[RMDB]
RNA sequence: GGGAACGACUCGAGUAGAGUCGAAAAGCUUAGCAGUUCGCUGCUAAGCGACGUUGACGGCCCUCACCCUUGACAAAUCCCAAUGAGGACAGGUGACUGACAGAUAUUAAGCGUUCGCGCUUAAUAAGACGCUUUUCAGAUUCGUCUGAAAAGCGUCAAAAGAAACAACAACAACAAC
Reactivity to 2A3 in 0.01 (KOAc 150mM, MgCl2 10mM, bicine 150mM(pH8.5), 24C), signal-to-noise 2, nucleotides 027 to 126: g030c010u000u000a000g040c000a010g020u050u220c230g050c080u000g020c000u000a000a010g010c030g000a030c070g010u040u180g060a090c050g070g000c020c020c010u030c030a030c030c030c020u040u110g050a040c040a050a210a120u060c030c010c000a040a100u200g040a140g050g020a030c050a040g100g020u050g030a030c000u000g040a020c010a070g090a040u070a010u140u030a000a000g000c000g060u050u100c190g010c000g020c060u010u000a010a010u020a010a040
Reactivity to DMS in 0.01 (KOAc 150mM, MgCl2 10mM, bicine 150mM(pH8.5), 24C), signal-to-noise 1, nucleotides 027 to 126: g010c000u010u000a030g000c000a020g000u000u010c220g050c000u010g000c000u000a000a000g000c000g000a010c150g040u000u000g010a060c140g010g000c030c020c010u000c030a160c050c000c030u000u000g000a090c120a100a100a150u010c000c000c030a070a040u010g000a070g040g000a100c060a030g000g000u040g010a130c050u000g000a080c140a090g000a180u000a010u000u000a000a000g000c000g020u000u000c130g030c020g000c000u000u010a000a000u000a040a060